[RMDB]
RNA sequence: GGGAACGACUCGAGUAGAGUCGAAAAGAAAAAGGAGGACAUGUCCGCCUGAUAGUGUCCGACCCUGUAGAUACUUCGCUCUGGAAAUUGUGCGGGACAACCCACGCGCGCAGCGAGCCGAAAAAAACGUAACAGAGUUGUUCGCAACUCUGUUACGAAAAGAAACAACAACAACAAC
Reactivity to DMS in 0.01 (KOAc 150mM, MgCl2 10mM, bicine 150mM(pH8.5), 24C), signal-to-noise 2, nucleotides 027 to 126: g000a050a100a120a120a030g010g040a260g010g020a020c050a050u000g030u000c010c160g010c120c050u010g010a060u000a030g080u000g020u000c000c020g010a160c090c000c020u010g020u010a080g000a080u000a050c100u000u000c030g030c050u000c040u000g050g000a120a060a090u000u000g000u020g030c000g000g000g000a140c210a060a090c070c000c010a090c150g000c040g010c030g020c060a070g000c090g010a020g000c060c050g020a010a030a000a040a100a060a170
Reactivity to 2A3 in 0.01 (KOAc 150mM, MgCl2 10mM, bicine 150mM(pH8.5), 24C), signal-to-noise 1, nucleotides 027 to 126: g020a010a150a030a000a020g000g000a010g020g020a000c010a000u060g010u010c030c030g080c180c000u070g020a040u060a040g130u050g010u000c000c020g050a170c050c020c000u000g150u050a070g040a100u110a210c000u040u060c010g000c000u000c030u050g060g040a130a120a090u130u010g040u010g010c060g000g000g040a060c080a070a110c040c000c020a060c100g120c010g000c010g110c000a000g040c010g040a010g000c060c010g120a230a080a000a020a000a000a000